[RMDB]
RNA sequence: GGGAACGACUCGAGUAGAGUCGAAAAGACGCCUAAUGGCGAAAAUGUAAAAUCAACUACACACCAGAUAAAUACAACUGCUAAAUCUCGAAACUAGUUGAUCUAGUCCAGCGGUGAGAUCCGCAGACCCUGAUUAAUCGUUCGCGAUUAAUCAGGGAAAAGAAACAACAACAACAAC
Reactivity to 2A3 in 0.01 (KOAc 150mM, MgCl2 10mM, bicine 150mM(pH8.5), 24C), signal-to-noise 5, nucleotides 027 to 126: g050a030c000g020c010c020u240a260a160u300g000g010c020g050a090a060a020a020u200g040u120a030a050a020a040u040c010a020a030c030u080a010c020a010c010a020c040c030a010g040a110u090a050a120a020u190a040c120a130a050c050u080g010c020u160a090a110a080u020c030u030c040g020a060a020a030c010u000a020g000u010u070g040a040u040c050u040a040g040u020c040c020a020g010c010g050g000u070g050a030g010a030u040c000c000g000c010a000g040a050
Reactivity to DMS in 0.01 (KOAc 150mM, MgCl2 10mM, bicine 150mM(pH8.5), 24C), signal-to-noise 2, nucleotides 027 to 126: g000a280c000g020c000c000u020a090a020u080g050g010c000g000a020a070a100a010u000g000u020a080a060a130a070u020c050a000a010c010u000a000c130a100c120a110c150c080a080g070a080u000a020a070a160u030a100c100a110a110c240u000g000c140u010a020a040a060u000c020u000c130g000a070a020a060c220u020a010g020u000u050g000a000u000c030u010a040g040u010c100c060a070g000c030g010g000u010g010a220g000a010u010c010c080g000c020a080g000a130